[RMDB]
Notes: Source: RMDB library RFMREP, as collected in RNAgym. Structure probing data (DMS) for a 177-nucleotide construct.

RNA sequence: GGGAACGACUCGAGUAGAGUCGAAAAAGUUGAUCAGGUGAUGAAAUAUUUCGGAUGUAAACUCACAGACCUGUUCUGAAUGCGCAAAACCGUGUAGAGAUUUCCGUUGCCUUCCUUCUGAUGAUAACAAUGCCGUAAAGUUCGCUUUACGGCAUUGAAAAGAAACAACAACAACAAC
Reactivity to DMS in 0.01 (KOAc 150mM, MgCl2 10mM, bicine 150mM(pH8.5), 24C), signal-to-noise 2, nucleotides 027 to 126: a130g010u020u010g010a080u000c020a050g030g030u010g010a100u020g010a050a050a060u010a090u010u000u000c040g020g000a100u010g010u000a080a060a110c130u010c120a110c090a080g010a120c030c060u010g000u010u010c020u010g000a070a060u000g000c090g020c060a060a060a040a070c080c020g000u000g020u000a080g000a080g010a120u000u000u000c040c030g010u010u010g010c000c020u000u000c030c030u000u000c070u020g010a050u010g000a110u000a060a160